Description:
Chemical mapping of a 177-nucleotide RNA with 2A3 and DMS. The RNA was probed in 150 mM KOAc, 10 mM MgCl2 and 150 mM bicine (pH 8.5) at 24 C. For 2A3, 2,340 sequencing reads were counted. Values are in units of 0.01, from 0 to 300, in steps of 10. DMS adducts were read by reverse transcription with MarathonRT.

RNA sequence: GGGAACGACUCGAGUAGAGUCGAAAAGAUAUGGACCUUGUGCUCUUGGAUUUACAACUACAGCGGGGAUGGUCGGAAACGACCAUCGCCGUGCUGUAGUUGUUGUCAGAGCCCAAGGUCCUAAGUCCAAAGGAAACAACUUCGGUUGUUUCCUUUGAAAAGAAACAACAACAACAAC
Reactivity to 2A3 in 0.01 (KOAc 150mM, MgCl2 10mM, bicine 150mM(pH8.5), 24C), signal-to-noise 1, nucleotides 027 to 126: g020a010u120a080u220g010g000a000c000c000u000u000g000u010g050c000u020c030u100u220g160g010a030u300u300u300a010c010a000a000c030u020a010c000a020g020c040g010g000g000g000a000u000g000g040u000c000g040g050a040a090a000c030g020a000c000c060a040u020c030g010c000c000g100u050g040c000u020g000u010a000g000u000u010g000u000u000g000u020c010a000g010a000g080c050c000c000a000a000g000g000u000c020c000u000a010a000g000u000c020
Reactivity to DMS in 0.01 (KOAc 150mM, MgCl2 10mM, bicine 150mM(pH8.5), 24C), signal-to-noise 2, nucleotides 027 to 126: g000a110u010a300u000g000g000a020c000c000u000u000g010u000g000c000u000c010u000u010g020g010a030u000u010u000a010c010a010a000c010u010a010c010a020g010c000g000g000g000g000a010u000g000g000u000c000g020g000a080a130a280c000g000a030c000c000a000u000c000g010c000c010g000u000g030c030u010g000u000a000g010u000u000g000u000u000g000u000c000a020g010a020g000c010c060c000a010a010g010g000u000c000c000u000a000a080g010u010c040